[RMDB]
RNA sequence: GGGAACGACUCGAGUAGAGUCGAAAAGAAACGAUGAGAUCAUGGCACGCGGAACCUUUGCGAAUGUGCGUCUGAUCAACAAGCUGGCUUCAGAGACGGGCCCCCUGACUGUGUAUCUCCCCUCUGGGGCCUAAGUUUACUUCGGUAAACUUAGGCCAAAAGAAACAACAACAACAAC
Reactivity to DMS in 0.01 (KOAc 150mM, MgCl2 10mM, bicine 150mM(pH8.5), 24C), signal-to-noise 1, nucleotides 027 to 126: g010a110a040a090c100g030a120u010g020a230g010a020u000c010a030u000g030g010c020a030c000g010c040g020g010a230a090c060c100u000u050u030g010c090g010a040a110u000g000u010g010c010g010u000c050u000g000a040u000c020a060a120c170a080a130g010c050u010g000g020c020u000u000c020a110g010a070g000a080c090g000g020g020c000c020c050c030c030u000g000a060c120u010g010u000g000u010a100u000c060u000c010c000c000c040u030c050u000g000g020
Source: RMDB library OK2TRN, as collected in RNAgym. The record gives the reactivity of an RNA of 177 nucleotides to DMS. For DMS the reverse transcriptase was MarathonRT. The reactions ran in a buffer of 150 mM KOAc, 10 mM MgCl2 and 150 mM bicine (pH 8.5), at 24 C. The DMS profile rests on 1,140 reads.